[RMDB]
RNA sequence: GGGAACGACUCGAGUAGAGUCGAAAAGGAACUAAACUCGUGGUUCCUGUGGUUCACACCUGACCUCCUGAGCAGAAAAGAAAAAAGAAGGCGGCUCGGAGGAGCGCUUCAGGGAUCCCCGGGGAAACGGAAAGUAUAUGUUCGCAUAUACUUUCCGAAAAGAAACAACAACAACAAC
Reactivity to 2A3 in 0.01 (KOAc 150mM, MgCl2 10mM, bicine 150mM(pH8.5), 24C), signal-to-noise 1, nucleotides 027 to 126: g040g000a060a000c030u040a060a050a090c080u080c060g120u050g010g020u000u000c000c000u000g030u060g030g040u110u150c070a050c010a010c180c020u050g070a080c010c000u000c000c020u110g000a010g000c050a000g120a110a150a090a020g180a030a240a060a040a030a000g080a070a060g120g150c090g040g000c040u010c030g030g030a020g010g000a000g000c170g010c010u050u030c000a010g000g010g000a030u020c010c000c030c050g000g000g000g040a050a080a000
Reactivity to DMS in 0.01 (KOAc 150mM, MgCl2 10mM, bicine 150mM(pH8.5), 24C), signal-to-noise 1, nucleotides 027 to 126: g010g000a020a060c000u000a070a110a130c130u000c180g040u000g000g000u010u010c000c000u010g000u010g000g020u000u000c200a150c200a190c010c000u000g000a080c010c010u010c010c010u000g040a020g010c050a120g010a060a050a110a150g010a020a070a040a070a110a120g000a080a080g000g000c080g000g020c010u000c000g000g040a010g000g000a040g030c100g030c230u010u000c030a030g000g000g010a150u010c010c010c000c050g000g000g000g000a120a030a190
Structure probing data (2A3 and DMS) for a 177-nucleotide construct. For 2A3, 955 sequencing reads were counted. The RNA was probed in 150 mM KOAc, 10 mM MgCl2 and 150 mM bicine (pH 8.5) at 24 C.